[RMDB]
RNA sequence: GGGAACGACUCGAGUAGAGUCGAAAAGAAAGAAAGACGGACUAAAAAUCGCGAAAAGAAAAAGAAAGAAUAAGCGUCGAACGCGUCGACGAGUCCGAAACAACGCAAAGAAGCGUACAAAAGAAAACAUUAAUGACGGAUUCGUCCGUCAUUAAUGAAAAGAAACAACAACAACAAC
Reactivity to 2A3 in 0.01 (KOAc 150mM, MgCl2 10mM, bicine 150mM(pH8.5), 24C), signal-to-noise 5, nucleotides 027 to 126: g040a010a070a010g100a010a080a010g040a030c010g000g000a000c010u080a040a020a030a000a060u110c020g010c030g140a080a110a080a060g270a020a070a040a040a010g260a020a120a030g110a080a090u220a220a010g080c010g000u000c000g010a050a030c010g000c010g010u050c000g000a000c010g010a000g000u000c000c000g010a000a010a010c060a000a020c020g000c000a000a130a100g090a190a030g050c000g020u060a070c090a000a080a010a010g170a040a080a000a000
Reactivity to DMS in 0.01 (KOAc 150mM, MgCl2 10mM, bicine 150mM(pH8.5), 24C), signal-to-noise 5, nucleotides 027 to 126: g000a090a120a110g000a100a120a110g000a230c000g010g000a020c000u000a030a110a060a110a040u020c030g000c020g020a100a040a150a140g010a040a100a090a080a100g010a090a040a080g000a100a030u020a040a090g010c030g030u000c010g010a090a100c000g010c010g000u010c010g000a030c020g000a050g000u000c020c000g000a120a070a070c220a060a050c020g000c020a080a090a100g000a180a120g010c010g030u010a070c150a060a070a070a090g010a110a030a080a070